Source: RMDB library OK3TST, as collected in RNAgym. An RNA of 207 nucleotides, treated with 2A3 and DMS and read out base by base. For DMS, 5,849 sequencing reads were counted. The RNA was probed in 150 mM KOAc, 10 mM MgCl2 and 150 mM bicine (pH 8.5) at 24 C. Reactivities are rounded to 0.1 and cut off at 0 and 3.

RNA sequence: GGGAACGACUCGAGUAGAGUCGAAAAUUACAACAAAGAUCACCCAUUUUCGCGCGACAUUACGUUAAUUAGUAAUGACAACAUACAGCGCACAGCACAUUCAUUUGUAAUUGCCGGUGUGUCGCCGAUGGUUUGUUCGGCCAUCACUAACUUUGCGUACCUUACGUGUUUUCGAACACGUAAGGUAAAAAGAAACAACAACAACAAC
Reactivity to 2A3 in 0.01 (KOAc 150mM, MgCl2 10mM, bicine 150mM(pH8.5), 24C), signal-to-noise 5, nucleotides 027 to 156: u080u060a040c030a120a010c030a090a210a060g090a070u120c090a120c060c000c060a080u160u110u080u130c160g030c010g010c010g030a010c030a000u060u070a030c020g050u030u040a090a050u080u070a070g020u030a000a010u000g060a050c040a130a000c000a080u230a070c070a070g000c030g050c060a020c050a060g020c010a010c000a100u070u090c010a030u040u060u140g270u110a040a030u020u020g030c060c020g020g000u010g000u010g020u060c040g000c020c010g010a000u010g000g030u030u080u120g100u040u060c060g030g000c000c000a010u020c010a010c040u130a170a070c030u060u040u100g030c060g080
Reactivity to DMS in 0.01 (KOAc 150mM, MgCl2 10mM, bicine 150mM(pH8.5), 24C), signal-to-noise 3, nucleotides 027 to 156: u000u000a090c060a050a170c100a110a080a140g010a150u000c050a130c020c010c020a230u010u000u010u010c100g010c070g030c030g030a270c030a060u000u000a020c000g000u010u000a110a130u000u040a060g010u000a020a010u000g000a250c030a030a060c050a090u010a090c050a130g000c030g030c040a070c060a090g000c050a070c050a070u010u000c070a180u010u000u000g040u000a020a090u000u000g010c050c050g030g030u010g020u000g010u000c030g030c030c040g000a040u020g010g000u000u010u010g030u000u000c110g040g000c030c010a060u000c000a110c070u000a030a090c050u000u000u000g020c050g000